[RMDB]
RNA sequence: GGGAACGACUCGAGUAGAGUCGAAAAGCGUACUACCAAUGUAAAGUGUUUGGGAGCUCGUAAAAGUCAGCCUCCCAAAUAGGAGGCUGUCGCUACGAGCGAAGAACAAACAUGAAGAAGUUGGUAUCGCAAAGGGAUGAUCUUCGGAUCAUCCCAACGAAGGUAAUACCUUCGGGUAUUACCUUCGAAAAGAAACAACAACAACAAC
Reactivity to DMS in 0.01 (KOAc 150mM, MgCl2 10mM, bicine 150mM(pH8.5), 24C), signal-to-noise 1, nucleotides 027 to 156: g050c040g000u020a070c050u000a050c000c040a000a080u000g000u000a040a250a300g020u000g010u000u000u000g000g020g040a280g040c000u000c040g010u000a010a070a050a120g040u000c000a000g000c020c000u000c000c010c000a020a080a110u000a020g020g000a020g050g020c000u000g010u000c020g010c070u000a000c000g020a020g020c000g000a000a070g000a130a090c000a000a000a060c000a050u000g010a050a210g000a120a300g000u000u000g000g040u000a050u000c020g000c000a070a080a110g020g000g040a000u000g010a050u000c000u000u000c300g060g000a010u000c000a010u000c020c000c000a020a000
Reactivity to 2A3 in 0.01 (KOAc 150mM, MgCl2 10mM, bicine 150mM(pH8.5), 24C), signal-to-noise 2, nucleotides 027 to 156: g020c010g070u090a060c030u000a000c010c000a030a000u050g000u000a000a000a000g030u020g000u000u010u010g030g000g020a040g010c000u010c020g010u010a140a060a030a110g010u030c010a020g000c030c010u040c050c020c060a070a160a040u110a030g000g000a000g000g000c000u020g000u000c000g020c060u020a000c000g000a010g000c000g020a040a000g010a000a000c000a000a000a000c010a000u010g010a040a240g020a000a010g000u010u010g000g020u030a060u300c000g000c000a050a020a020g000g000g000a000u000g000a000u000c030u070u110c250g030g000a000u000c000a000u000c000c000c010a000a020